[RMDB]
RNA sequence: GGGAACGACUCGAGUAGAGUCGAAAAGAUCAAUAUUACUCGCCUUUUACUCUUCUUUCGUUUUGAAGGAAAUAUGAGUGAAAUCAGAAGGACAAUCGUCGUUUUGAUGAUAUACCUUCGCCUCUUUGUGAUGGUAACUAUUCGUAGUUACCAUCACAAAAGAAACAACAACAACAAC
Reactivity to 2A3 in 0.01 (KOAc 150mM, MgCl2 10mM, bicine 150mM(pH8.5), 24C), signal-to-noise 6, nucleotides 027 to 126: g060a050u190c090a080a080u090a110u280u140a060c030u040c050g110c010c010u010u030u040u020a020c000u000c010u050u000c000u010u020u020c060g200u170u070u170u300g050a030a030g080g090a000a030a030u300a120u180g020a010g010u020g010a030a010a020u110c040a060g000a020a000g010g020a050c180a050a020u010c000g020u000c060g080u060u050u190u300g000a010u000g000a000u010a000u020a020c000c000u000u000c010g030c020c010u010c000u000u010u020
Reactivity to DMS in 0.01 (KOAc 150mM, MgCl2 10mM, bicine 150mM(pH8.5), 24C), signal-to-noise 1, nucleotides 027 to 126: g000a030u020c120a090a080u010a060u000u020a080c130u000c040g040c040c040u000u000u010u000a050c000u000c040u000u010c000u000u000u000c020g000u060u040u060u100g010a070a030g000g010a040a030a100u020a070u010g000a000g020u020g000a050a070a040u020c150a100g010a050a000g010g010a070c110a070a020u000c070g000u000c000g000u020u010u050u010g000a010u010g000a000u000a030u020a010c020c010u000u000c000g010c240c060u000c030u030u000u000